The data come from the RNA Mapping Database (RMDB), library OK1LIB. An RNA of 177 nucleotides, treated with 2A3 and DMS and read out base by base. For 2A3 the reverse transcriptase was SuperScript II with manganese. DMS adducts were read by reverse transcription with MarathonRT. For 2A3, 22,119 sequencing reads were counted.
RNA sequence: GGGAACGACUCGAGUAGAGUCGAAAAGCCGCGUGAGGGAUGAAGGCCUUCGGGUUGUAAACCUCUUUCAACAGGGAAGAAGCGUGAGUGACGGUACCUGCAGAAGAAGCACCGGCAAUCUACGUGCAAUUAUUAUGAUAUUCGUAUCAUAAUAAUUAAAAGAAACAACAACAACAAC
Reactivity to 2A3 in 0.01 (KOAc 150mM, MgCl2 10mM, bicine 150mM(pH8.5), 24C), signal-to-noise 5, nucleotides 027 to 126: g010c000c000g020c040g050u050g020a010g010g040g000a020u300g010a080a000g000g000c000c000u020u030c140g070g000g000u010u020g000u000a000a000a000c000c000u000c000u000u040u010c000a010a000c000a010g010g010g020a020a000g010a030a010g030c010g020u050g040a100g010u030g020a030c010g000g010u020a030c000c000u030g000c040a020g020a120a000g030a030a000g030c020a000c020c000g000g010c000a010a060u020c020u070a030c030g060u070g040c020
Reactivity to DMS in 0.01 (KOAc 150mM, MgCl2 10mM, bicine 150mM(pH8.5), 24C), signal-to-noise 9, nucleotides 027 to 126: g010c000c000g010c160g010u000g010a040g000g000g000a020u040g010a290a300g000g010c000c010u010u060c130g010g010g010u010u000g000u010a020a300a300c010c000u000c020u000u010u010c050a120a010c050a040g000g000g010a170a010g010a050a300g000c020g000u040g000a120g010u000g000a300c020g020g000u010a100c040c030u000g000c230a100g000a080a050g010a100a120g000c090a050c030c010g000g010c020a060a070u010c040u010a050c080g000u020g010c140